[RMDB]
Description
An RNA of 177 nucleotides, treated with 2A3 and DMS and read out base by base.
RNA sequence: GGGAACGACUCGAGUAGAGUCGAAAAUUAAAUAGCGUAAUCGACAUUGAGAAUGUACGCUAAGUGUGUGUUGUAUGGGCAACGUCCAAUUGAACACACACACAGUUGGACCUAAUGUCGAUAAAAACCGGUUAUAAUAGUUCGCUAUUAUAACCGGAAAAGAAACAACAACAACAAC
Reactivity to 2A3 in 0.01 (KOAc 150mM, MgCl2 10mM, bicine 150mM(pH8.5), 24C), signal-to-noise 4, nucleotides 027 to 126: u190u100a010a020a100u140a060g050c060g070u090a050a040u020c000g000a000c000a000u000u050g050a030g080a240a150u140g020u060a030c030g000c030u000a100a100g000u000g000u000g010u000g020u030u020g120u080a100u040g000g020g000c090a220a150c190g030u000c000c000a010a050u050u090g140a090a000c000a000c000a010c000a000c000a000c020a020g120u300u190g060g020a000c010c000u000a000a010u020g010u000c000g000a000u060a030a040a000a020a020
Reactivity to DMS in 0.01 (KOAc 150mM, MgCl2 10mM, bicine 150mM(pH8.5), 24C), signal-to-noise 3, nucleotides 027 to 126: u020u020a080a070a190u000a040g020c060g020u000a070a030u000c020g000a060c010a020u000u000g000a090g000a150a100u010g020u010a020c060g030c000u010a060a140g030u000g020u000g030u000g000u000u000g030u010a110u000g020g000g000c020a120a110c270g040u000c000c000a020a110u010u000g020a040a020c020a010c010a000c010a010c010a050c170a070g020u000u000g030g000a150c040c040u000a030a030u000g000u000c000g000a100u010a030a070a080a080a070
For DMS, 2,429 sequencing reads were counted. The RNA was probed in 150 mM KOAc, 10 mM MgCl2 and 150 mM bicine (pH 8.5) at 24 C. For 2A3, 3,642 sequencing reads were counted. For 2A3 the reverse transcriptase was SuperScript II with manganese. Source: RMDB library M2PK90, as collected in RNAgym.